[RMDB]
RNA sequence: GGGAACGACUCGAGUAGAGUCGAAAAAACACCAAGCUGACAGUGCACGGAUGCUCCUUCUUUGGCUUCAAUAACAUGUGCAUCGAGGCCUGGGGCAGUGUUUCAGUGAGGGGAUGCAGUUUUUCAGCCAACUGGAUGGGGGUCGUGGGCAGAACCAGAUGCAAAGACCAUUCGUGGUCUUUGCAUCAAAAGAAACAACAACAACAAC
Reactivity to 2A3 in 0.01 (KOAc 150mM, MgCl2 10mM, bicine 150mM(pH8.5), 24C), signal-to-noise 1, nucleotides 027 to 156: a000a000c050a080c020c020a020a010g030c020u020g010a040c030a040g080u060g100c060a040c080g150g100a080u100g110c040u140c030c000u200u150c060u120u090u230g020g000c010u010u030c060a120a130u090a100a000c060a110u250g080u070g080c040a090u090c090g020a090g000g000c000c000u000g010g000g000g080c000a050g000u030g040u090u070u070c000a020g000u000g020a130g000g000g020g010a000u040g000c090a000g020u100u000u000u040u050c000a070g050c010c000a030a030c080u060g100g020a060u010g090g060g000g000g000u010c000g050u070g010g010g000c010a040g040a060a000c010c010a010